[RMDB]
RNA sequence: GGGAACGACUCGAGUAGAGUCGAAAAGACUGGAUCCUGGGAAUCAAAGGACAACGGCGAUUUGAUGAUUUUCACCCAUUCAGAAUGUGAAGGAAAAGAGAAAAUUGCCGCAUUCGAUAUGGACGGACACUAAUUACCUAUUCGUAGGUAAUUAGUGAAAAGAAACAACAACAACAAC
Reactivity to 2A3 in 0.01 (KOAc 150mM, MgCl2 10mM, bicine 150mM(pH8.5), 24C), signal-to-noise 9, nucleotides 027 to 126: g060a030c070u080g050g040a080u020c010c010u020g020g010g060a030a060u100c060a110a090a110g050g010a040c030a080a030c060g040g000c020g020a010u020u000u060g080a080u030g040a050u020u000u030u040c060a090c020c030c020a010u070u060c050a050g170a300a090u080g050u070g070a120a110g060g030a030a060a030a020g100a010g040a010a040a020a040u050u050g010c000c000g000c020a040u050u060c030g040a050u020a060u250g040g020a020c040g030g020a010
Reactivity to DMS in 0.01 (KOAc 150mM, MgCl2 10mM, bicine 150mM(pH8.5), 24C), signal-to-noise 9, nucleotides 027 to 126: g010a140c080u000g010g010a110u000c020c020u000g010g010g010a090a060u000c080a070a100a130g010g010a080c140a090a130c020g010g000c010g010a040u000u000u000g000a210u020g000a160u000u000u000u000c020a110c080c050c020a040u000u000c230a150g010a110a040u000g000u000g010a080a120g000g000a020a020a030a050g000a110g000a130a020a020a030u000u000g010c010c000g010c070a100u000u000c040g000a120u010a080u000g000g010a080c080g010g010a200
The data come from the RNA Mapping Database (RMDB), library OK2TRN. The record gives the reactivity of an RNA of 177 nucleotides to 2A3 and DMS. The reactions ran in a buffer of 150 mM KOAc, 10 mM MgCl2 and 150 mM bicine (pH 8.5), at 24 C. For 2A3, 36,433 sequencing reads were counted. Reactivities are given for positions 27 through 126. For 2A3 the reverse transcriptase was SuperScript II with manganese.